[RMDB]
RNA sequence: GGGAACGACUCGAGUAGAGUCGAAAACUUUGCUGAUGCCAACAGAAGAAUACCAGAGUGGGUAAAACCACAUUGUCUUCUCACGGGAUCAGUUUUGAUGUCGUGUGGCUUGUGGGAUUUUGCAAAAUGUUAUGUCAUCGUUCGCGAUGACAUAACAAAAAGAAACAACAACAACAAC
Reactivity to 2A3 in 0.01 (KOAc 150mM, MgCl2 10mM, bicine 150mM(pH8.5), 24C), signal-to-noise 1, nucleotides 027 to 126: c010u020u020u090g000c020u010g000a010u020g210c030c000a040a000c000a050g040a020a010g010a030a050u100a120c070c010a030g050a060g190u020g000g060g000u020a040a050a030a000c000c000a010c000a000u040u110g040u000c010u000u000c010u000c010a010c000g000g000g040a030u010c000a010g010u120u000u040u120g050a040u080g090u020c040g000u030g040u090g110g010c000u110u080g000u050g040g030g030a060u020u100u000u150g040c000a010a030a110a050
Reactivity to DMS in 0.01 (KOAc 150mM, MgCl2 10mM, bicine 150mM(pH8.5), 24C), signal-to-noise 3, nucleotides 027 to 126: c050u010u010u000g010c020u010g010a020u000g000c010c010a070a300c260a020g020a090a010g000a110a060u010a160c210c080a050g000a080g030u000g000g010g040u010a090a050a080a210c000c000a000c000a060u010u000g020u000c010u000u000c010u010c040a050c300g020g030g000a010u000c000a030g010u000u000u000u000g010a020u000g010u010c060g010u000g040u020g010g010c090u010u010g010u010g020g010g000a110u000u000u010u000g020c060a020a050a070a050